Notes:
An RNA of 177 nucleotides, treated with DMS and 2A3 and read out base by base. It was measured as part of the RMDB library OK1LIB. Reactivities are given for positions 27 through 126. The DMS profile rests on 3,054 reads.
RNA sequence: GGGAACGACUCGAGUAGAGUCGAAAAAUCAGUGCGAUUGCUUUCCACGCACUGCUUUGCAAAUCUAGUCCAGUUAAUGCCUCUGGACGGAAAGACGGAGCAAUUAAAAAGCGAUCCGCUGCAGGCGCCAUAUGAGCACGUUCGCGUGCUCAUAUGGAAAAGAAACAACAACAACAAC
Reactivity to DMS in 0.01 (KOAc 150mM, MgCl2 10mM, bicine 150mM(pH8.5), 24C), signal-to-noise 3, nucleotides 027 to 126: a070u040c000a010g010u000g000c080g050a040u000u000g060c050u000u000u000c090c030a300c260g000c140a100c090u000g000c120u000u000u000g000c080a060a200a100u000c040u010a120g030u000c010c000a000g000u010u010a100a030u020g010c150c140u030c000u000g000g040a000c000g030g030a000a070a110g000a300c090g000g010a010g010c000a070a020u030u010a030a080a020a030a020g030c020g030a040u000c000c040g030c020u000g020c210a030g000g010c210g010
Reactivity to 2A3 in 0.01 (KOAc 150mM, MgCl2 10mM, bicine 150mM(pH8.5), 24C), signal-to-noise 8, nucleotides 027 to 126: a000u090c010a020g030u000g050c130g050a040u010u040g020c020u070u010u040c120c060a090c090g060c020a030c040u010g000c010u040u020u030g040c060a060a070a160u020c010u060a090g000u000c000c010a000g010u060u150a220a130u290g130c040c040u060c000u010g000g020a020c020g000g020a050a050a000g040a040c010g010g010a010g000c020a010a030u150u180a160a180a060a030a010g000c000g010a020u000c010c010g020c010u020g030c060a060g100g060c050g000